[RMDB]
RNA sequence: GGGAACGACUCGAGUAGAGUCGAAAAGAUAUGGAGUGUACCAAGACAUGAUUCGCAAUCGGAAACGAUUGCAAUCAACAGCUUGACACUCCUAAGUCAAAAUCGCAGCAUGUUCGCAUGCUGCGAACAGUGGCAGAGAGUUCGCUCUCUGCCACUGAAAAGAAACAACAACAACAAC
Reactivity to DMS in 0.01 (KOAc 150mM, MgCl2 10mM, bicine 150mM(pH8.5), 24C), signal-to-noise 1, nucleotides 027 to 126: g000a040u010a050u010g000g010a050g000u000g000u000a180c300c020a020a020g000a020c120a130u000g010a000u000u000c270g010c010a010a000u000c010g050g020a030a010a020c000g050a010u000u000g010c000a000a010u000c000a140a090c180a110g000c000u000u000g000a070c010a010c000u010c010c000u000a000a060g010u000c000a110a040a180a140u000c030g000c000a010g000c000a010u000g000u020u000c220g010c000a010u020g000c000u000g000c000g010a020a030
Reactivity to 2A3 in 0.01 (KOAc 150mM, MgCl2 10mM, bicine 150mM(pH8.5), 24C), signal-to-noise 1, nucleotides 027 to 126: g030a010u000a000u080g000g000a040g040u010g000u100a250c170c070a000a000g050a010c230a300u300g000a010u010u000c180g000c020a000a000u000c000g000g000a020a000a000c010g000a000u000u000g000c000a000a000u000c000a030a230c170a040g030c030u010u000g030a000c000a000c010u020c000c000u000a020a010g000u000c000a060a000a000a250u050c000g020c020a030g000c000a010u030g070u070u130c300g000c200a010u000g050c000u020g030c020g010a000a000